[RMDB]
RNA sequence: GGGAACGACUCGAGUAGAGUCGAAAAUGAACCAGGAAUUCCUAGUAGUCGCGUGUCACUAACGGGCGACGACUGCGUCCCUGUUCUUUGUACACACCGCCCGUCGUUAUCUAAGAUGGUGCUAUGUCAAUAUUGGGGAGUUCGCUCCCCAAUAUUGAAAAGAAACAACAACAACAAC
Reactivity to 2A3 in 0.01 (KOAc 150mM, MgCl2 10mM, bicine 150mM(pH8.5), 24C), signal-to-noise 3, nucleotides 027 to 126: u070g010a000a010c040c010a000g000g040a020a120u120u050c010c000u030a020g040u000a000g020u060c030g030c150g150u050g070u080c040a030c290u130a160a050c070g020g050g000c030g020a030c000g040a030c040u060g010c000g020u070c000c010c000u000g060u030u000c030u040u070u040g150u110a020c060a020c000a020c050c020g000c010c050c000g050u010c020g040u070u090a160u140c130u090a090a040g000a020u040g000g020u120g000c040u070a100u140g080u040
Reactivity to DMS in 0.01 (KOAc 150mM, MgCl2 10mM, bicine 150mM(pH8.5), 24C), signal-to-noise 3, nucleotides 027 to 126: u010g000a010a070c160c080a040g000g030a050a090u000u020c060c050u010a050g030u000a040g020u010c020g020c020g000u000g020u000c170a120c210u020a110a130c090g040g010g000c030g020a020c020g000a030c040u000g000c180g000u000c050c000c020u000g010u000u000c030u010u010u000g020u010a070c130a100c090a080c120c070g010c010c010c000g030u010c020g000u000u000a080u000c160u020a070a140g000a020u000g020g020u000g020c050u000a060u010g010u000

Chemical mapping of a 177-nucleotide RNA with 2A3 and DMS. The DMS profile rests on 1,940 reads. Source: RMDB library RFMREP, as collected in RNAgym. For 2A3, 2,207 sequencing reads were counted. The RNA was probed in 150 mM KOAc, 10 mM MgCl2 and 150 mM bicine (pH 8.5) at 24 C. For DMS the reverse transcriptase was MarathonRT. 2A3 adducts were read by reverse transcription with SuperScript II with manganese.